[RMDB]
RNA sequence: GGGAACGACUCGAGUAGAGUCGAAAAGAGUGGAUUCGUCCACUCAAAAAGCGUACUACACGUGAACGCAGAUAAUCACUCCCCACCUCAAUCCCAAAUAGGAUUGAGAGGUGAUUGUAGUUCCGUGUAUCGCAAAAAAUCAGCGUUCGCGCUGAAAAGCCUUGAUGUAGUUCGCUACAUCAAGGCUAAAAGAAACAACAACAACAAC
Reactivity to 2A3 in 0.01 (KOAc 150mM, MgCl2 10mM, bicine 150mM(pH8.5), 24C), signal-to-noise 1, nucleotides 027 to 156: g000a010g000u010g000g000a020u000u050c200g030u010c090c010a000c000u000c000a010a010a000a010a010g070c060g070u130a100c120u030a000c000a000c000g300u270g140a000a000c000g020c180a010g170a300u280a020a000u080c000a000c030u050c030c030c050c000a050c000c000u000c000a000a000u010c000c020c020a000a300a040u210a050g000g000a000u000u000g000a000g000a000g000g000u000g020a030u000u060g000u060a110g000u000u000c080c000g000u010g000u000a010u020c000g000c000a000a000a000a000a000a140u000c000a000g010c000g010u000u130c160g050c000g000c170u000g000a000a180a000

Chemical mapping of a 207-nucleotide RNA with 2A3. For 2A3 the reverse transcriptase was SuperScript II with manganese. It was measured as part of the RMDB library RNAMAK. Values cover nucleotides 27 to 156.